An RNA of 207 nucleotides, treated with 2A3 and read out base by base.
RNA sequence: GGGAACGACUCGAGUAGAGUCGAAAAGCCGGUGGUGAGGGCUAAUCUCGUCCUUAAGUGCUGCUCCGGCGAGUUGAUCCUCGAACGAGAAGAUCACGACACCGUUCUGCCCGAUGAUCUCAUGCGAGGAGUAGCCGAAAAGCUUAGCCGCGCCGGCCUCAUGCGUAUGCUUCGGCAUACGCAUGAGAAAAGAAACAACAACAACAAC
Reactivity to 2A3 in 0.01 (KOAc 150mM, MgCl2 10mM, bicine 150mM(pH8.5), 24C), signal-to-noise 2, nucleotides 027 to 156: g020c020c030g000g040u090g010g160u120g100a080g030g020g050c000u010a040a050u050c070u030c080g130u160c010c100u120u120a160a060g020u090g130c010u010g000c020u010c020c010g030g020c020g010a010g000u120u170g080a060u000c000c020u020c030g040a060a090c050g010a110g030a270a070g020a020u100c060a020c090g070a040c030a070c080c000g050u130u070c060u140g070c010c000c090g080a200u030g010a000u030c000u020c000a050u220g030c040g030a050g000g020a010g020u010a010g000c010c010g020a080a090a060a000g000c000u040u020a000g000c000c000g000c000g020c000c000g000g000c000